Chemical mapping of a 177-nucleotide RNA with DMS and 2A3.
[RMDB]
RNA sequence: GGGAACGACUCGAGUAGAGUCGAAAAGGCGUCGAUGUUGAUGGGUAUAUGUAUCGGGAUGUCGACGCCAAAGGUUAGGGCGAUUUCGGGAAUCGCUAGCGCCGCGUGCAAGCCAAUGAGGCCCUGAACCAUGGUUAUAUUUCGAUAUAACCAUGGUAAAAGAAACAACAACAACAAC
Reactivity to DMS in 0.01 (KOAc 150mM, MgCl2 10mM, bicine 150mM(pH8.5), 24C), signal-to-noise 8, nucleotides 027 to 126: g000g020c000g010u000c000g000a010u000g020u000u010g000a150u030g020g030g030u010a070u040a090u060g030u020a030u010c010g010g010g000a020u010g000u000c000g010a020c010g020c000c000a000a020a050g000g010u000u010a100g010g010g000c000g000a060u000u000u010c160g000g000g000a110a050u010c030g010c020u000a040g010c110g000c020c030g010c090g010u010g010c050a100a110g000c030c040a080a080u020g000a150g010g000c010c000c000u010g000a130
Reactivity to 2A3 in 0.01 (KOAc 150mM, MgCl2 10mM, bicine 150mM(pH8.5), 24C), signal-to-noise 9, nucleotides 027 to 126: g010g000c000g010u000c000g000a010u010g020u050u040g090a300u130g110g040g140u110a160u040a060u280g220u060a030u070c020g030g050g010a010u020g010u010c000g000a000c000g000c000c000a020a020a000g020g000u100u100a030g030g030g000c010g020a040u020u080u130c130g060g020g070a030a040u030c010g000c010u010a040g020c020g010c010c010g030c030g010u070g010c050a080a040g020c000c020a030a060u160g030a060g040g060c000c000c000u010g030a020
It was measured as part of the RMDB library OK1LIB.